[RMDB]
RNA sequence: GGGAACGACUCGAGUAGAGUCGAAAAUAAAUCUUAUUCGUAAGAUUUACUUGAACGCUGCAAGGGGCAGCGCGCUCGCUUGCGCACGCACGCGCAAUAAAAAUCUGGGGACAUUCGUGUCCCCAAAAGAAUACAAAGAUUUCGAUCUUUGUAUUCUAAAAGAAACAACAACAACAAC
Reactivity to DMS in 0.01 (KOAc 150mM, MgCl2 10mM, bicine 150mM(pH8.5), 24C), signal-to-noise 3, nucleotides 027 to 126: u000a000a010a010u000c000u000u000a030u000u010c120g020u000a010a010g000a030u010u000u000a010c050u000u020g010a110a100c050g020c010u000g010c040a190a140g000g000g010g000c000a010g010c000g010c140g010c050u000c030g010c170u000u010g010c020g060c010a030c190g000c240a030c190g020c000g000c020a040a050u010a010a100a070a090a060u000c120u000g020g010g010g020a010c000a050u000u010c200g030u000g000u000c000c000c000c000a000a000a060